RNA sequence: GGGAACGACUCGAGUAGAGUCGAAAAACAUAGGUGGCCCCCUUACGAGGAGGCCACCUAUGAAACACUCUCUAUCAGAAUGAAUUCUUGCUGUAAUAACAGAUAGAGUAGGUUGUUACAGACUAAAAUACGUGUGCAUUCUUCGGAAUGCACACAAGUUAUAACACGACUUCGGUCGUGUUAUAACAAAAGAAACAACAACAACAAC
Reactivity to 2A3 in 0.01 (KOAc 150mM, MgCl2 10mM, bicine 150mM(pH8.5), 24C), signal-to-noise 1, nucleotides 027 to 156: a000c000a020u000a010g000g000u000g000g000c020c000c000c000c000u010u030a050c170g220a050g000g020a010g020g000c050c020a000c000c000u000a000u000g000a000a000a000c020a030c010u000c000u010c000u000a010u050c050a050g150a200a220u150g080a040a160u300u070c070u100u300g080c010u000g030u040a060a030u000a070a040c010a000g080a150u030a010g080a050g090u040a040g070g000u000u000g000u020u020a000c000a020g040a060c060u140a030a190a060a080u190a040c080g000u020g020u000g000c000a030u000u010c000u000u010c020g140g000a000a000u010g000c000a020c000a000c000a000a000

This 207-nucleotide RNA was probed chemically with 2A3. Values cover nucleotides 27 to 156. The RNA was probed in 150 mM KOAc, 10 mM MgCl2 and 150 mM bicine (pH 8.5) at 24 C.